[RMDB]
RNA sequence: GGGAACGACUCGAGUAGAGUCGAAAACAUGGAGUCUUCGGACUCCAUGCACUACCGAAAUAAUGCCUCGGUAUAAAAGGCAAACCCUUGGAAUCAAGGGAACGAUGUCACGAUUCGUCGUGACAAAUAUACUGAGGUAGUUCGCUACCUCAGUAUAAAAAGAAACAACAACAACAAC
Reactivity to 2A3 in 0.01 (KOAc 150mM, MgCl2 10mM, bicine 150mM(pH8.5), 24C), signal-to-noise 6, nucleotides 027 to 126: c000a000u000g000g010a010g000u010c030u050u070c300g090g000a000c000u000c000c000a000u000g000c000a030c020u050a010c000c010g020a060a060a070u220a070a060u080g010c010c000u000c010g000g010u070a070u160a300a050a010a020g010g000c000a020a040a200c010c010c000u030u000g060g120a180a170u300c000a000a010g010g000g030a010a000c050g100a070u100g000u010c000a010c000g010a020u030u040c190g040u010c010g000u110g000a000c000a000a000a000
Reactivity to DMS in 0.01 (KOAc 150mM, MgCl2 10mM, bicine 150mM(pH8.5), 24C), signal-to-noise 2, nucleotides 027 to 126: c000a000u010g000g000a010g010u010c000u000u020c230g020g010a010c000u000c000c000a000u000g000c040a210c030u000a050c000c000g000a070a110a110u010a120a100u000g000c010c000u000c000g000g000u000a090u010a020a050a080a040g000g010c000a020a080a170c010c000c000u010u000g010g020a170a160u010c010a010a010g010g010g010a060a070c210g000a120u000g000u010c000a000c010g000a030u000u010c190g010u000c000g010u010g000a010c000a010a020a070